[RMDB]
The record gives the reactivity of an RNA of 177 nucleotides to 2A3 and DMS. Reactivities are given for positions 27 through 126. The RNA was probed in 150 mM KOAc, 10 mM MgCl2 and 150 mM bicine (pH 8.5) at 24 C. For 2A3 the reverse transcriptase was SuperScript II with manganese.
RNA sequence: GGGAACGACUCGAGUAGAGUCGAAAAGAUAUGGAGUCAUGUAGACAUGAAAUACCAUCGGAAACGAUGGAUUUCAACAGCUACCUGACUCCUAAGUCAAACGGUACGUUCUUCGGAACGUACCGAACUAAUAGUAAGCGUUCGCGCUUACUAUUAGAAAAGAAACAACAACAACAAC
Reactivity to 2A3 in 0.01 (KOAc 150mM, MgCl2 10mM, bicine 150mM(pH8.5), 24C), signal-to-noise 6, nucleotides 027 to 126: g010a010u020a010u070g010g000a000g000u000c010a010u020g010u010a010g050a100c220a300u250g040a020a000a000u300a300c010c000a000u000c000g000g010a020a010a000c000g000a000u010g020g000a010u000u000u000c010a050a060c170a100g020c000u000a010c000c010u010g000a000c000u000c000c000u000a010a000g000u000c010a070a080a110c020g010g000u010a000c000g020u000u010c000u020u070c300g130g000a010a000c000g000u000a000c000c000g000a000a000
Reactivity to DMS in 0.01 (KOAc 150mM, MgCl2 10mM, bicine 150mM(pH8.5), 24C), signal-to-noise 7, nucleotides 027 to 126: g000a010u000a080u010g000g010a020g010u000c000a010u000g010u000a000g010a050c190a140u020g010a020a010a000u000a180c010c000a000u000c000g010g000a020a020a050c000g010a010u000g000g000a030u000u000u000c000a070a070c260a190g000c000u000a010c000c040u000g000a010c000u000c000c000u000a010a060g000u000c010a140a110a260c030g000g000u000a000c000g010u000u000c000u000u010c250g030g010a010a010c000g000u000a000c000c000g010a010a050